The record gives the reactivity of an RNA of 177 nucleotides to DMS and 2A3.

[RMDB]
RNA sequence: GGGAACGACUCGAGUAGAGUCGAAAAGAUAUGGACACUGAAUGAACUUUUGACGUUUACUCGGAAACGAGGAUAAACGAUAAGUUCGCGUGUCCUAAGUCAAAAGUAAGCAGUUCGCUGCUUACAACCUUCCCCACAUGUUCGCAUGUGGGGAAGGAAAAGAAACAACAACAACAAC
Reactivity to DMS in 0.01 (KOAc 150mM, MgCl2 10mM, bicine 150mM(pH8.5), 24C), signal-to-noise 2, nucleotides 027 to 126: g010a070u000a300u000g000g000a030c000a030c010u020g050a060a120u000g010a030a000c000u000u000u000u000g030a130c040g030u000u000u000a070c010u000c000g000g000a060a060a190c020g000a000g000g000a130u000a000a020a010c020g000a130u000a000a010g020u000u000c000g000c070g000u000g000u010c000c000u000a000a140g000u000c030a080a070a190a100g010u000a000a020g000c000a000g010u000u010c250g020c000u000g000c020u000u000a000c000a110a110
Reactivity to 2A3 in 0.01 (KOAc 150mM, MgCl2 10mM, bicine 150mM(pH8.5), 24C), signal-to-noise 2, nucleotides 027 to 126: g020a010u070a030u110g010g060a000c000a000c070u250g170a190a300u280g000a070a000c010u100u170u140u250g170a040c050g010u000u010u030a020c000u000c000g000g040a050a060a030c010g000a000g000g090a090u160a010a030a000c010g090a070u060a150a020g000u020u010c010g020c000g020u000g000u000c000c020u020a090a020g010u000c000a150a040a040a000g010u000a000a000g040c010a000g020u040u120c210g050c150u000g020c030u010u010a000c000a000a000
Values are in units of 0.01, from 0 to 300, in steps of 10. The DMS profile rests on 1,408 reads. Conditions: 150 mM KOAc, 10 mM MgCl2 and 150 mM bicine (pH 8.5), 24 C. It was measured as part of the RMDB library TTRDEL.